Conditions: 150 mM KOAc, 10 mM MgCl2 and 150 mM bicine (pH 8.5), 24 C. An RNA of 207 nucleotides, treated with 2A3 and DMS and read out base by base. Reactivities are rounded to 0.1 and cut off at 0 and 3. It was measured as part of the RMDB library M2RFPK.
[RMDB]
RNA sequence: GGGAACGACUCGAGUAGAGUCGAAAAACGCAUCAUACGUGAUGCGAGAACUACAGUUCCGCUCCUCUAGCACACAGAGGUCAAUUGGGUGCGACCCCCCCCUCUCCCGUGGGUCAACGGGAACGAAAAAAGACCCUUUAGUUCGCUAAAGGGUCAACAUAUAAUCAUUGUUCGCAAUGAUUAUAUGAAAAGAAACAACAACAACAAC
Reactivity to 2A3 in 0.01 (KOAc 150mM, MgCl2 10mM, bicine 150mM(pH8.5), 24C), signal-to-noise 5, nucleotides 027 to 156: a000c000g000c000a000u010c000a000u040a110c220g100u070g010a020u040g000c040g010a050g030a020a020c120u240a090c060a090g020u020u010c010c010g020c050u060c000c000u030c020u030a050g020c030a020c000a000c000a030g010a000g010g030u050c020a020a070u110u110g050g010g000u010g010c020g180a250c010c010c000c000c010c000c000c000u030c010u010c020c000c000g010u010g000g010g030u110c050a000a000c000g000g000g020a000a010c030g020a020a000a020a010a010a010g000a000c000c000c010u000u000u000a010g010u030u060c180g020c160u000a000a000a000g020g000g000u000c000a000a000
Reactivity to DMS in 0.01 (KOAc 150mM, MgCl2 10mM, bicine 150mM(pH8.5), 24C), signal-to-noise 4, nucleotides 027 to 156: a160c020g000c010a010u020c010a080u010a110c290g060u000g020a020u000g020c000g020a070g010a070a070c050u020a100c070a160g020u000u000c010c020g010c040u010c000c020u010c090u000a130g010c070a050c060a080c070a070g010a050g000g010u010c070a040a140u000u000g010g010g020u000g040c010g000a300c010c020c000c000c010c020c020c010u000c080u010c010c000c000g020u020g010g020g000u000c130a050a050c010g010g000g010a020a070c080g000a000a050a060a090a090a140g000a040c000c000c000u000u000u000a020g010u000u000c300g030c000u000a010a010a020g010g010g020u000c000a000a020
For DMS, 10,941 sequencing reads were counted.